This 177-nucleotide RNA was probed chemically with DMS. Source: RMDB library TTRINS, as collected in RNAgym. Conditions: 150 mM KOAc, 10 mM MgCl2 and 150 mM bicine (pH 8.5), 24 C. For DMS, 2,213 sequencing reads were counted.
RNA sequence: GGGAACGACUCGAGUAGAGUCGAAAAGAUAUGGAGACCGAGGAUCUAAGUCGAGACUAAGAGAAUGUCCCUCGGAAACGAGGGUCAUUCUCUUAGUCGAAGACAGCUUAGGGAGGUCUCCUAAGUCCGAGUUUACUUAGUUCGCUAAGUAAACUCGAAAAGAAACAACAACAACAAC
Reactivity to DMS in 0.01 (KOAc 150mM, MgCl2 10mM, bicine 150mM(pH8.5), 24C), signal-to-noise 2, nucleotides 027 to 126: g010a100u000a290u010g000g010a030g010a010c020c000g000a120g040g010a030u020c000u000a000a020g010u000c040g000a230g000a020c000u000a000a020g000a060g010a040a020u000g010u000c000c000c000u000c010g000g010a050a050a100c000g010a020g010g020g000u000c000a000u000u000c000u010c000u000u010a000g020u000c000g000a060a070g000a090c300a110g000c030u010u010a020g000g000g000a050g020g010u000c010u000c010c000u000a010a070g000u000c060